[RMDB]
RNA sequence: GGGAACGACUCGAGUAGAGUCGAAAAGAUAUGGAGCUCUGAACGACCCACGCGAGGAGCAACAGCGUAUGGUCUCGGAAACGAGACCUACGACAUGCUCCUCGGGUCGUUCAGAGCUCCUAAGUCACAUAGUGCCAAUCUUCGGAUUGGCACUAUGAAAAGAAACAACAACAACAAC
Reactivity to DMS in 0.01 (KOAc 150mM, MgCl2 10mM, bicine 150mM(pH8.5), 24C), signal-to-noise 1, nucleotides 027 to 126: g030a040u000a300u000g010g000a020g010c000u000c000u000g010a010a010c020g000a020c010c010c020a300c300g010c300g020a040g030g000a020g000c010a030a220c300a250g010c010g010u000a010u010g040g000u000c000u000c000g000g000a060a020a130c000g000a020g000a000c000c000u000a000c000g030a020c070a130u000g000c000u020c000c000u000c000g000g040g020u000c000g000u000u000c000a000g000a010g030c030u000c000c000u000a000a070g020u020c020a300
Chemical mapping of a 177-nucleotide RNA with DMS. The reactions ran in a buffer of 150 mM KOAc, 10 mM MgCl2 and 150 mM bicine (pH 8.5), at 24 C. The DMS profile rests on 820 reads. DMS adducts were read by reverse transcription with MarathonRT. Source: RMDB library TTRINS, as collected in RNAgym.